[RMDB]
RNA sequence: GGGAACGACUCGAGUAGAGUCGAAAACUGCGCCGCAUGGCGGCCUGGAUGCGCCAGAUCCCCGACCCCGAGGACGUGCGCGUGGUGGUGCUGUACUCGCCGCUGCCGGGCGAGGACCUGGCCGGCGGAGCCGAGCCCGUUUCGACGGGCUCGGCUCAAAAGAAACAACAACAACAAC
Reactivity to DMS in 0.01 (KOAc 150mM, MgCl2 10mM, bicine 150mM(pH8.5), 24C), signal-to-noise 1, nucleotides 027 to 126: c010u000g010c130g080c050c000g000c080a040u010g000g040c040g000g060c020c040u000g020g000a060u000g040c030g000c000c040a010g000a190u010c040c050c010c100g000a200c080c080c070c030g000a170g000g000a050c040g040u000g020c020g030c020g020u000g000g000u000g010g000u010g030c050u020g000u000a130c030u010c000g000c070c040g020c070u000g030c000c080g000g000g000c020g000a170g010g000a110c000c000u000g010g020c000c050g030g000c000g000
Reactivity to 2A3 in 0.01 (KOAc 150mM, MgCl2 10mM, bicine 150mM(pH8.5), 24C), signal-to-noise 2, nucleotides 027 to 126: c010u060g000c030g010c070c030g130c100a150u250g140g020c030g030g030c010c010u040g050g000a040u100g020c020g030c020c000a050g060a190u100c060c050c000c000g060a140c030c000c000c020g010a050g020g050a040c050g040u110g020c040g000c020g030u050g040g010u040g000g000u020g000c030u020g030u030a030c020u000c020g010c010c000g000c000u080g050c030c010g000g020g010c020g070a200g020g010a070c020c000u010g000g000c000c020g000g000c000g040

The record gives the reactivity of an RNA of 177 nucleotides to DMS and 2A3. The data come from the RNA Mapping Database (RMDB), library OK1LIB. Conditions: 150 mM KOAc, 10 mM MgCl2 and 150 mM bicine (pH 8.5), 24 C.